This 177-nucleotide RNA was probed chemically with DMS and 2A3. Values are in units of 0.01, from 0 to 300, in steps of 10. The 2A3 profile rests on 8,472 reads. The data come from the RNA Mapping Database (RMDB), library TTRDEL. The reactions ran in a buffer of 150 mM KOAc, 10 mM MgCl2 and 150 mM bicine (pH 8.5), at 24 C.

[RMDB]
RNA sequence: GGGAACGACUCGAGUAGAGUCGAAAAGAUAUGGAAUCGCACACAGCGAAGAACUCGGAAACGAGGGAGCUGAAUGUGGCGAUUCCUAAGUCAAAUCGUCACCAGAGCUUCGGCUCUGGUGACGAAAGAAAAUGACGUAGUUCGCUACGUCAUUUUCAAAAGAAACAACAACAACAAC
Reactivity to DMS in 0.01 (KOAc 150mM, MgCl2 10mM, bicine 150mM(pH8.5), 24C), signal-to-noise 4, nucleotides 027 to 126: g000a030u010a300u000g000g000a020a010u000c010g010c000a040c010a100c000a020g000c000g010a080a170g000a130a240c000u010c000g000g010a110a090a220c010g020a020g010g000g000a070g000c000u000g000a080a080u010g020u010g030g030c000g000a010u000u010c000c000u000a020a070g000u010c030a090a090a130u000c000g010u000c010a010c000c010a010g020a020g040c000u000u000c220g020g010c000u000c000u000g000g010u000g000a010c000g000a000a040a090
Reactivity to 2A3 in 0.01 (KOAc 150mM, MgCl2 10mM, bicine 150mM(pH8.5), 24C), signal-to-noise 5, nucleotides 027 to 126: g020a010u060a050u120g010g000a000a000u000c000g020c000a010c000a000c000a020g020c020g240a300a040g020a080a020c000u000c000g020g030a070a070a060c010g000a000g030g030g020a010g000c010u040g070a300a220u170g060u130g220g010c000g000a000u000u000c000c000u000a060a000g030u000c010a000a040a200u050c010g010u000c010a000c010c010a010g010a000g000c140u260u300c300g100g000c010u000c010u000g000g000u000g010a000c000g000a000a000a000